An RNA of 177 nucleotides, treated with DMS and read out base by base. The DMS profile rests on 926 reads. The reactions ran in a buffer of 150 mM KOAc, 10 mM MgCl2 and 150 mM bicine (pH 8.5), at 24 C.

RNA sequence: GGGAACGACUCGAGUAGAGUCGAAAAGACUGCUUUAAUGUCCUCGGCAAAUUUUCAGAUGACCCCAAAACUACAACCAGGAUGCUAAAGUCUAUGUAUGACCACCAAUUGUAUUCUCAAAUAAUAAUAAAUCAGCUAGUUUCGACUAGCUGAUUUAAAAAGAAACAACAACAACAAC
Reactivity to DMS in 0.01 (KOAc 150mM, MgCl2 10mM, bicine 150mM(pH8.5), 24C), signal-to-noise 2, nucleotides 027 to 126: g000a110c060u000g000c010u010u020u010a040a030u000g000u010c000c010u020c160g020g030c080a090a090a120u000u010u000u000c140a070g040a070u010g000a190c100c040c020c050a090a060a070a070c110u020a070c130a060a140c040c040a000g000g000a050u000g000c120u000a040a070a110g000u000c060u000a090u000g000u000a070u010g030a130c060c080a080c090c070a070a070u000u000g020u010a110u000u000c020u010c010a030a080a050u010a050a120u000a030a060